RNA sequence: GGGAACGACUCGAGUAGAGUCGAAAAUCAUCAAGAAGUAGGCUUAGGCCAAUUGCUUGGUGGUGAAAGUAGAGGGAAGGUAGCCCUUCGACGCCUCUAAGUACGCUGUGGGAGUAGUGCUUAAAUCAAAAGCACAGCGACUUCGGUCGCUGUGCAAGUCACUCCAACAGUUCGCUGUUGGAGUGACAAAAGAAACAACAACAACAAC
Reactivity to 2A3 in 0.01 (KOAc 150mM, MgCl2 10mM, bicine 150mM(pH8.5), 24C), signal-to-noise 1, nucleotides 027 to 156: u010c000a000u000c000a000a010g030a070a040g050u120a010g000g000c040u040u090a080g080g070c020c040a040a030u050u040g000c000u000u000g000g000u010g000g030u010g010a050a090a000g020u060a070g010a040g030g000g010a100a000g150g020u130a070g060c000c000c000u030u060c030g010a010c020g070c020c000u020c050u030a080a020g030u010a000c030g010c070u050g000u100g080g030g000a040g030u110a010g010u040g010c020u060u120a110a060a100u140c110a170a000a030a000g020c000a000c000a000g000c000g000a030c020u030u020c110g080g000u020c000g000c000u000g010u010g000c010a020a000
Structure probing data (2A3) for a 207-nucleotide construct.
High 2A3 reactivity points to a flexible backbone, as in loops and unpaired stretches.
For 2A3, 741 sequencing reads were counted.
Conditions: 150 mM KOAc, 10 mM MgCl2 and 150 mM bicine (pH 8.5), 24 C.
For 2A3 the reverse transcriptase was SuperScript II with manganese.